About this RNA
This 207-nucleotide RNA was probed chemically with 2A3.
RNA sequence: GGGAACGACUCGAGUAGAGUCGAAAAUGAACUCAGAGGGGAGUGUGAUCCUGGUACCGCCGUAGAAACUGGAUUACGACGUCUACCCGGGAUUCAAACUCGGCCCCUCUCAGAGGUGACUCUGAGCGAAAGGUCUGUGCAAAGCACACUGACGAGUCUGUGUAAGUCUCUUCGGAGACUUACACAGAAAAGAAACAACAACAACAAC
Reactivity to 2A3 in 0.01 (KOAc 150mM, MgCl2 10mM, bicine 150mM(pH8.5), 24C), signal-to-noise 1, nucleotides 027 to 156: u080g010a030a010c030u010c040a020g010a020g000g020g000g020a000g000u050g030u060g000a000u000c000c020u020g000g020u000a000c000c000g000c000c000g000u000a010g160a110a200a110c180u170g080g030a070u160u000a000c000g000a000c000g030u030c040u050a050c000c050c080g000g000g000a040u150u090c070a130a060a080c040u020c000g140g000c000c000c000c000u000c000u000c000a000g000a010g000g020u040g030a020c000u010c020u030g020a040g050c070g080a200a010a010g040g010u040c020u030g020u020g000c070a030a200a150g030c000a030c000a000c050u050g030a010c030g040a020g100u000

Description:
The 2A3 profile rests on 923 reads. The reactions ran in a buffer of 150 mM KOAc, 10 mM MgCl2 and 150 mM bicine (pH 8.5), at 24 C.